The record gives the reactivity of an RNA of 177 nucleotides to 2A3 and DMS. DMS adducts were read by reverse transcription with MarathonRT. The DMS profile rests on 4,490 reads. Conditions: 150 mM KOAc, 10 mM MgCl2 and 150 mM bicine (pH 8.5), 24 C. For 2A3 the reverse transcriptase was SuperScript II with manganese.
[RMDB]
RNA sequence: GGGAACGACUCGAGUAGAGUCGAAAAUCAAGGCCUGAUAGGCCAAGGUGAGGCUCAGCCGAGAAACGUGCUCAGAGGAGCCUGGCCGGAGUGUGAUGGGGGAGUCUUUGUCCAGGCUGCUGCCACGGAAUGUGGACUAGUUCGCUAGUCCACAUUCAAAAGAAACAACAACAACAAC
Reactivity to 2A3 in 0.01 (KOAc 150mM, MgCl2 10mM, bicine 150mM(pH8.5), 24C), signal-to-noise 2, nucleotides 027 to 126: u050c020a000a110g020g000c000c000u200g120a240u290a210g010g000c000c000a010a020g030g000u030g050a050g050g000c010u020c010a030g000c040c010g020a040g040a070a180a010c020g040u080g000c020u030c090a090g040a030g210g030a000g000c000c000u010g020g020c030c020g050g020a060g000u200g040u160g090a270u290g020g010g000g040g020a050g020u030c000u020u040u030g030u000c040c010a030g050g000c000u070g070c020u040g000c050c010a060c020g120
Reactivity to DMS in 0.01 (KOAc 150mM, MgCl2 10mM, bicine 150mM(pH8.5), 24C), signal-to-noise 5, nucleotides 027 to 126: u000c030a070a300g000g010c010c010u000g010a150u010a120g010g010c000c000a010a130g020g010u000g010a170g000g010c010u000c010a240g010c030c010g000a040g010a050a090a090c130g000u000g000c010u000c020a120g010a060g010g000a050g020c010c010u010g010g010c020c010g010g000a050g000u020g000u000g000a100u000g000g010g010g000g010a140g000u010c020u000u000u000g000u010c020c030a060g000g020c000u000g000c050u000g010c120c040a110c250g000